[RMDB]
RNA sequence: GGGAACGACUCGAGUAGAGUCGAAAACUCGGCGAAUCGUCCCCACAUAGCAGUUCCCAGGACCCCCUUCUAAAAUGACCGAGAGGGGGUGCUAGGAACACGGGGGCCCAGUGGAGCCAUGGGAUGCGGAUCUCUUCGUUCGCGAAGAGAAAAAGAAACAACAACAACAAC
Reactivity to 2A3 in 0.01 (KOAc 150mM, MgCl2 10mM, bicine 150mM(pH8.5), 24C), signal-to-noise 8, nucleotides 027 to 129: c010u000c010g010g000c040g040a040a060u030c000g020u030c000c000c030c000a020c020a040u170a030g060c080a030g010u000u010c010c000c010a000g010g040a010c000c010c000c020c010u030u040c030u080a120a150a170a150u230g070a060c060c090g070a060g010a010g100g010g000g000g000u010g010c000u000a010g000g000a000a000c010a000c020g020g000g010g000g000c000c020c000a040g020u090g030g050a020g040c030c010a040u040g030g020g010a040u070g010c010g040g020a040
Reactivity to DMS in 0.01 (KOAc 150mM, MgCl2 10mM, bicine 150mM(pH8.5), 24C), signal-to-noise 5, nucleotides 027 to 129: c030u000c000g010g000c030g050a000a000u000c040g020u030c010c000c010c040a110c190a070u050a100g060c180a070g000u060u000c000c000c000a050g030g020a000c000c000c000c000c000u020u030c060u000a040a050a090a080u080g040a140c200c190g000a070g000a040g030g000g010g000g030u000g040c010u020a090g010g010a000a000c030a050c070g000g010g000g020g000c050c030c040a070g030u040g000g020a090g010c070c030a050u010g000g040g020a030u050g000c080g030g000a120